The data come from the RNA Mapping Database (RMDB), libraries RFM100 and RFMREP. An RNA of 177 nucleotides, treated with DMS and 2A3 and read out base by base. The RNA was probed in 150 mM KOAc, 10 mM MgCl2 and 150 mM bicine (pH 8.5) at 24 C. Values are in units of 0.01, from 0 to 300, in steps of 10.
RNA sequence: GGGAACGACUCGAGUAGAGUCGAAAAGGGCUGUAGUGCGCUAUGCCGAUCGGGUGUCCGCACUAAGUUCGGCAUCAAUAUGGUGACCUCCCGGGAGCGGGGGACCACCAGGUUGCCUAAGGAGGGGCCAUCUAAUCGUUUUCGAACGAUUAGAUGGAAAAGAAACAACAACAACAAC
Reactivity to DMS in 0.01 (KOAc 150mM, MgCl2 10mM, bicine 150mM(pH8.5), 24C), signal-to-noise 9, nucleotides 027 to 126: g000g000g010c040u000g010u010a010g010u000g010c010g020c160u010a030u000g010c020c010g010a120u040c190g010g020g030u010g000u010c300c040g000c010a010c010u000a030a040g000u010u000c150g000g000c050a010u010c040a050a100u030a090u010g010g020u000g000a120c030c000u000c000c010c010g010g010g020a150g000c030g010g000g000g000g000a040c060c000a010c000c000a010g000g010u000u000g000c010c010u020a080a130g000g010a080g000g000g000g010
Reactivity to 2A3 in 0.01 (KOAc 150mM, MgCl2 10mM, bicine 150mM(pH8.5), 24C), signal-to-noise 9, nucleotides 027 to 126: g030g010g000c060u080g050u220a010g000u010g020c010g000c080u070a030u080g010c000c010g260a300u230c180g100g000g000u020g020u000c020c020g000c010a010c000u020a020a050g020u010u040c030g000g000c000a010u010c010a040a170u110a080u180g010g010u010g010a070c000c000u070c000c010c000g020g080g030a190g100c110g000g010g010g010g030a060c110c010a010c000c000a000g000g020u010u020g000c000c010u040a050a020g040g010a040g000g010g000g000